Source: RMDB library OK1LIB, as collected in RNAgym.
An RNA of 177 nucleotides, treated with 2A3 and DMS and read out base by base.
The DMS profile rests on 1,178 reads.
DMS adducts were read by reverse transcription with MarathonRT.
Values cover nucleotides 27 to 126.
2A3 adducts were read by reverse transcription with SuperScript II with manganese.
RNA sequence: GGGAACGACUCGAGUAGAGUCGAAAAGACCUCGAGGUGCCACCGGACGUCGUCGACCGGGCGACGGGAUUUCUCGAGGAGAUCAGCGUCGUCCCCGACGCACGGGCGAUCCGAGAGUACGCCACCGCUCCUACUACGCAUUCGUGCGUAGUAGGAGAAAAGAAACAACAACAACAAC
Reactivity to 2A3 in 0.01 (KOAc 150mM, MgCl2 10mM, bicine 150mM(pH8.5), 24C), signal-to-noise 4, nucleotides 027 to 126: g060a030c000c000u010c010g020a100g030g030u100g030c020c010a090c060c010g090g050a080c040g020u130c010g000u010c000g020a160c110c030g050g010g000c000g000a000c000g000g030g000a020u010u040u010c050u080c130g250a160g160g000a000g020a000u020c020a020g300c000g000u000c000g010u030c040c010c000c000g010a000c010g000c020a010c020g000g000g000c050g010a050u040c010c000g050a070g000a010g080u040a050c060g050c040c010a070c020c030g030
Reactivity to DMS in 0.01 (KOAc 150mM, MgCl2 10mM, bicine 150mM(pH8.5), 24C), signal-to-noise 1, nucleotides 027 to 126: g000a130c040c040u070c090g000a190g020g000u000g000c060c060a090c060c010g000g000a300c040g040u000c000g020u000c000g000a020c190c300g030g000g000c030g000a030c040g000g030g000a000u000u020u000c010u070c170g000a180g000g050a000g000a000u000c000a020g000c070g020u000c010g040u020c000c000c120c000g000a060c000g080c070a090c030g000g020g040c050g000a130u000c000c010g000a040g000a050g010u000a020c090g000c000c120a040c090c040g000